[RMDB]
RNA sequence: GGGAACGACUCGAGUAGAGUCGAAAACGCUGGGCAGACGAGGACGGGUGGAGUAACUGAAGCGCGCACGGUUACGCUGACCGUCUCCCCACCGGCUGCCUGUGCUGAAGCGCGCACGGCAACCGAAAGGUGCGAAACUCCCGAUUCGUCGGGAGAAACUGUAAACGAUGUUCGCAUCGUUUACAGUAAAAGAAACAACAACAACAAC
Reactivity to 2A3 in 0.01 (KOAc 150mM, MgCl2 10mM, bicine 150mM(pH8.5), 24C), signal-to-noise 3, nucleotides 027 to 156: c050g010c040u100g010g000g000c020a020g010a040c020g020a030g060g000a030c040g000g040g060u190g070g250a050g000u000a020a000c010u010g050a210a040g010c010g000c000g000c030a010c030g000g050u020u030a010c040g060c300u300g000a060c000c000g010u020c000u010c020c030c000c000a000c000c020g000g000c000u000g000c000c040u040g040u060g000c020u100g040a150a050g000c010g000c000g000c000a000c030g070g010c020a050a050c000c010g060a090a020a070g000g020u070g020c030g030a080a050a050c000u010c020c000c010g010a010u040u080c240g020u000c000g070g000g000a000g000a010a020
Reactivity to DMS in 0.01 (KOAc 150mM, MgCl2 10mM, bicine 150mM(pH8.5), 24C), signal-to-noise 1, nucleotides 027 to 156: c070g000c040u000g030g000g000c040a020g000a080c050g040a270g000g000a080c000g020g060g000u000g000g000a070g010u000a020a020c020u000g030a040a190g020c000g070c000g020c010a190c000g050g020u000u000a000c020g030c070u000g000a080c070c010g020u000c010u000c300c020c010c010a300c040c020g020g000c000u010g010c010c010u000g030u030g000c040u010g020a000a100g020c210g020c000g000c030a040c010g000g000c000a150a080c020c020g000a050a110a200g000g000u000g020c010g020a030a130a190c000u000c000c000c030g000a130u000u000c220g050u050c010g040g000g000a010g010a020a030